Structure probing data (DMS and 2A3) for a 177-nucleotide construct. DMS adducts were read by reverse transcription with MarathonRT. The reactions ran in a buffer of 150 mM KOAc, 10 mM MgCl2 and 150 mM bicine (pH 8.5), at 24 C. The data come from the RNA Mapping Database (RMDB), library OK2TST. 2A3 adducts were read by reverse transcription with SuperScript II with manganese.
[RMDB]
RNA sequence: GGGAACGACUCGAGUAGAGUCGAAAAUAGCUGCAUAGCGCUGCGUAACCACACCAAGUGCUUGUGCUCACGCAACACCGGAUCCACACAAUCGAGUGCAAGGUUGCCAGGAAUCACACCGCUGCGCAGCUUAGCUCCUAUUCGUAGGAGCUAAGCUAAAAGAAACAACAACAACAAC
Reactivity to DMS in 0.01 (KOAc 150mM, MgCl2 10mM, bicine 150mM(pH8.5), 24C), signal-to-noise 7, nucleotides 027 to 126: u010a060g010c030u000g010c020a050u000a030g010c030g020c070u010g020c100g010u000a080a080c100c040a110c110a080c090c030a090a150g010u000g000c070u010u000g020u000g010c060u000c100a080c160g010c070a060a060c070a080c060c060g000g010a060u010c060c050a090c090a060c100a080a070u010c080g000a070g020u000g010c060a060a080g000g020u000u000g010c030c050a100g010g000a070a070u000c070a060c070a060c130c020g020c020u000g010c060g010c060
Reactivity to 2A3 in 0.01 (KOAc 150mM, MgCl2 10mM, bicine 150mM(pH8.5), 24C), signal-to-noise 4, nucleotides 027 to 126: u090a010g020c030u060g020c030a040u060a080g040c020g000c040u030g000c020g040u040a030a040c020c010a040c010a010c050c040a130a050g020u020g060c010u030u030g030u030g020c020u020c020a100c070g030c030a060a060c020a050c050c030g030g020a030u040c030c000a020c000a010c020a080a110u120c050g060a020g070u050g010c030a050a030g080g000u020u040g030c020c010a050g040g060a060a050u090c020a020c000a010c070c010g010c050u060g000c030g000c040